[RMDB]
This 177-nucleotide RNA was probed chemically with DMS and 2A3. The DMS profile rests on 7,470 reads. The data come from the RNA Mapping Database (RMDB), library M2PK50. For DMS the reverse transcriptase was MarathonRT.
RNA sequence: GGGAACGACUCGAGUAGAGUCGAAAAGUCCCCACUUUCGAGUGGGGACAAUCAAAGAUUUGGCACUCGCAGCCCGCAGCGUUGGUGCUCCCACGCGGUGCAUAACUGCCUACUUCGGUAGGCAGAAGUUAUGAUACGGUUUCGACCGUAUCAUAACAAAAGAAACAACAACAACAAC
Reactivity to DMS in 0.01 (KOAc 150mM, MgCl2 10mM, bicine 150mM(pH8.5), 24C), signal-to-noise 5, nucleotides 027 to 126: g000u000c000c000c000c000a000c010u000u000u010c130g020a020g030u000g010g000g030g010a000c000a000a030u000c130a080a110a150g000a130u010u010u010g010g010c040a040c020u000c050g010c050a110g000c020c020c040g010c100a070g000c050g000u010u010g010g020u010g010c080u000c030c020c020a120c120g010c010g000g010u000g010c060a090u010a070a180c010u000g010c000c010u000a000c000u000u010c170g020g020u000a000g000g010c010a000g010a020a080
Reactivity to 2A3 in 0.01 (KOAc 150mM, MgCl2 10mM, bicine 150mM(pH8.5), 24C), signal-to-noise 8, nucleotides 027 to 126: g000u000c010c000c020c010a000c010u090u090u090c240g130a010g000u000g000g000g000g010a000c010a010a010u070c030a020a060a050g100a070u120u130u260g060g000c020a010c020u130c060g040c040a020g010c020c010c010g010c040a090g020c030g070u140u170g030g030u130g040c020u060c000c000c000a050c030g010c030g000g030u040g000c010a050u120a230a090c000u010g000c000c000u000a010c010u010u060c210g100g000u000a010g000g000c000a000g000a000a010